RNA sequence: GGGAACGACUCGAGUAGAGUCGAAAAGAGUCCAACAACCACUUUAGUUCUCGCCCAGGUCAUGAGGAGCCCAGGGACUCUAGUAGAUUUACUUGCUAAAAAUAAAAAUAAAAUAAAAAUACAGUUCGCUGUAUUAAAAGAAACAACAACAACAAC
Reactivity to 2A3 in 0.01 (KOAc 150mM, MgCl2 10mM, bicine 150mM(pH8.5), 24C), signal-to-noise 1, nucleotides 027 to 135: g140a020g010u020c000c000a000a010c070a010a070c030c010a000c000u080u000u070a050g060u250u080c010u010c090g000c000c010c010a000g000g030u000c050a020u170g000a030g000g000a000g000c020c000c010a000g000g020g000a000c000u010c000u020a000g030u010a020g020a210u080u150u110a050c020u030u160g030c010u080a150a080a150a090a140u300a040a020a220a080a020u300a130a080a290a000u250a040a300a090a090a000u040a010c000a010g020u020u050c150g040c040u000g000u000a000u070u090a080
This 155-nucleotide RNA was probed chemically with 2A3. The reactions ran in a buffer of 150 mM KOAc, 10 mM MgCl2 and 150 mM bicine (pH 8.5), at 24 C. High 2A3 reactivity points to a flexible backbone, as in loops and unpaired stretches. For 2A3, 335 sequencing reads were counted. Values are in units of 0.01, from 0 to 300, in steps of 10. The data come from the RNA Mapping Database (RMDB), library P90LIB.